[RMDB]
The data come from the RNA Mapping Database (RMDB), library TTRDEL. Structure probing data (DMS) for a 177-nucleotide construct. The DMS profile rests on 1,367 reads. The reactions ran in a buffer of 150 mM KOAc, 10 mM MgCl2 and 150 mM bicine (pH 8.5), at 24 C.

RNA sequence: GGGAACGACUCGAGUAGAGUCGAAAAGAUAUGGAGUCUUCGACGAUCGUGUGUAUCGGAAACGAUACCACGGGAGAAGGCUCCUAAGUCAAACAAUUAGUCACUGCUUCGGCAGUGACUAAUUGAACUUGCAAAGAAUCUUCGGAUUCUUUGCAAGAAAAGAAACAACAACAACAAC
Reactivity to DMS in 0.01 (KOAc 150mM, MgCl2 10mM, bicine 150mM(pH8.5), 24C), signal-to-noise 2, nucleotides 027 to 126: g000a020u000a300u000g000g000a040g020u000c000u000u000c010g040a120c260g000a020u010c000g010u000g000u060g030u000a000u000c010g020g000a070a080a200c010g010a020u000a010c000c010a000c010g010g000g000a010g020a020a000g020g000c000u000c000c000u000a000a050g000u000c050a150a090a300c020a000a000u000u000a010g000u000c000a000c000u010g020c000u000u000c260g030g000c010a000g020u000g010a000c000u000a000a010u000u000g000a020a210